[RMDB]
RNA sequence: GGGAACGACUCGAGUAGAGUCGAAAACAACCAUCCAUAAAGCUGCAGUUAACAUCGCCGAUAUGGACCGUAAUUUCUUUCAAGAUGUUAACCUGACCAUCGCGCAACACCCAUCUGAAACUGACCACGAGUUAAGGUGGUUCGCCACCUUAACUCGAAAAGAAACAACAACAACAAC
Reactivity to 2A3 in 0.01 (KOAc 150mM, MgCl2 10mM, bicine 150mM(pH8.5), 24C), signal-to-noise 2, nucleotides 027 to 126: c000a010a060c000c000a030u050c040c000a070u100a070a100a010g060c060u090g010c090a060g000u010u030a030a010c000a050u010c010g010c070c030g030a060u010a060u260g050g000a020c000c010g080u070a070a170u070u090u000c060u020u070u030c040a100a050g000a020u050g020u000u080a010a010c040c040u030g030a060c010c020a050u080c050g000c000g000c050a030a020c010a110c090c000c010a100u050c070u060g130a120a060a040c050u100g050a020c010c080a050
Reactivity to DMS in 0.01 (KOAc 150mM, MgCl2 10mM, bicine 150mM(pH8.5), 24C), signal-to-noise 2, nucleotides 027 to 126: c130a160a130c070c030a170u000c030c020a100u000a060a140a130g010c060u010g000c130a040g010u000u000a040a050c060a020u010c010g010c170c140g010a120u000a010u010g000g010a040c070c110g010u010a060a100u000u000u000c020u020u000u000c130a110a150g000a030u000g000u000u000a070a040c040c100u010g000a080c120c100a020u030c060g000c050g000c030a060a070c100a050c020c010c030a120u010c050u020g000a050a020a060c030u000g000a100c040c090a240